[RMDB]
RNA sequence: GGGAACGACUCGAGUAGAGUCGAAAAGCCGACUGCACGUGCGUGCGAGCAGUUUUCGAAAUCGCACGUUUCACGUAAAGACCCAACUCUACUCGAUGCGAGGGUCAGCAUGCAAGCAGCAAUAAAAAUGUACUUAUCUAUUCGUAGAUAAGUACAUAAAAGAAACAACAACAACAAC
Reactivity to 2A3 in 0.01 (KOAc 150mM, MgCl2 10mM, bicine 150mM(pH8.5), 24C), signal-to-noise 9, nucleotides 027 to 126: g040c020c020g070a080c050u050g020c030a000c020g010u010g000c000g000u010g000c010g000a060g050c100a060g030u050u060u150u240c070g070a060a080a100u010c010g000c000a000c010g000u020u080u070c020a010c000g010u020a020a050a030g030a020c000c000c010a020a020c010u000c000u010a010c000u000c010g020a040u100g010c020g020a070g000g010g000u010c010a010g000c010a030u130g010c010a030a050g000c010a000g010c030a040a030u140a140a100a020a010
Reactivity to DMS in 0.01 (KOAc 150mM, MgCl2 10mM, bicine 150mM(pH8.5), 24C), signal-to-noise 9, nucleotides 027 to 126: g020c050c070g010a140c060u000g010c190a030c020g020u000g010c010g020u000g010c000g000a020g000c170a140g010u010u000u010u010c130g010a050a110a110u000c010g010c010a020c010g000u000u010u010c030a020c030g020u000a050a130a080g000a080c030c030c020a100a060c010u000c000u000a010c010u000c000g010a030u000g010c030g000a100g010g000g000u000c020a080g000c030a060u000g010c050a050a070g010c050a050g000c070a070a070u010a020a050a050a100